An RNA of 177 nucleotides, treated with DMS and 2A3 and read out base by base. The RNA was probed in 150 mM KOAc, 10 mM MgCl2 and 150 mM bicine (pH 8.5) at 24 C. Values cover nucleotides 27 to 126. The 2A3 profile rests on 4,268 reads.

RNA sequence: GGGAACGACUCGAGUAGAGUCGAAAAGAUAUGGAUCGGUACACAGCUUUGAUCUACGGUCGGAAACGACCGUAGGGAGCUGGUACUCGAUCCUAAGUCAAAAGAAGAGAGCUUCGGCUCUCUUCAAUCUACAUAAGGUCUUCGGACCUUAUGUAGAAAAAGAAACAACAACAACAAC
Reactivity to DMS in 0.01 (KOAc 150mM, MgCl2 10mM, bicine 150mM(pH8.5), 24C), signal-to-noise 2, nucleotides 027 to 126: g000a010u000a020u010g000g000a000u010c000g020g000u000a000c010a190c080a030g030c010u000u000u010g000a010u010c000u000a000c000g010g000u000c000g010g000a010a000a040c000g020a010c000c000g030u000a000g010g010g010a000g060c010u000g030g020u000a010c000u020c010g010a000u000c010c000u000a000a050g000u010c000a120a110a160a150g000a030a010g000a020g000a020g010c000u010u010c300g050g010c000u000c000u000c000u000u000c000a070a100
Reactivity to 2A3 in 0.01 (KOAc 150mM, MgCl2 10mM, bicine 150mM(pH8.5), 24C), signal-to-noise 3, nucleotides 027 to 126: g000a010u030a000u050g000g000a000u000c010g000g070u070a020c300a020c010a090g020c000u300u300u010g010a010u000c010u010a000c000g020g010u000c010g010g010a000a020a010c000g000a000c000c010g000u010a010g010g000g000a010g010c020u050g010g020u000a000c010u020c010g000a010u000c000c000u000a000a000g000u000c020a060a050a010a300g010a010a020g020a010g000a010g010c020u080u140c300g240g000c000u040c000u010c000u000u000c000a010a000